[RMDB]
RNA sequence: GGGAACGACUCGAGUAGAGUCGAAAACGAAUGGGACGUCCCCGGUGGGCAACUCACCACCAAAGGUGGCGUGCUCGAAGUGUAUAUGGGCCAUUACAUGCGUGAAUGGCUGGCAGAGCAGGGGAUAGUAUAUCAGCUGCUUCGGCAGCUGAUAUACAAAAGAAACAACAACAACAAC
Reactivity to 2A3 in 0.01 (KOAc 150mM, MgCl2 10mM, bicine 150mM(pH8.5), 24C), signal-to-noise 1, nucleotides 027 to 126: c000g080a070a050u170g010g000g000a010c000g010u000c050c010c000c010g060g030u050g040g000g030c010a050a230c070u070c080a020c010c010a000c010c060a100a080a000g100g000u040g010g020c020g010u030g080c000u000c000g030a120a060g140u110g110u090a100u050a020u300g040g000g030c020c010a010u070u000a100c050a060u250g180c170g080u160g060a040a020u030g000g030c010u020g000g070c030a010g010a010g050c060a050g040g000g010g000a000u000a060
Reactivity to DMS in 0.01 (KOAc 150mM, MgCl2 10mM, bicine 150mM(pH8.5), 24C), signal-to-noise 2, nucleotides 027 to 126: c040g020a130a030u000g000g010g000a120c040g030u000c020c000c000c040g060g010u000g010g000g000c100a090a100c190u000c160a080c000c000a060c030c070a040a140a120g010g020u000g000g000c110g040u010g000c010u000c020g000a080a100g020u000g010u030a040u010a160u000g010g010g010c020c000a020u000u000a010c030a130u040g010c270g010u010g010a030a000u000g000g000c020u010g010g000c080a120g000a120g000c040a100g020g000g000g010a090u010a070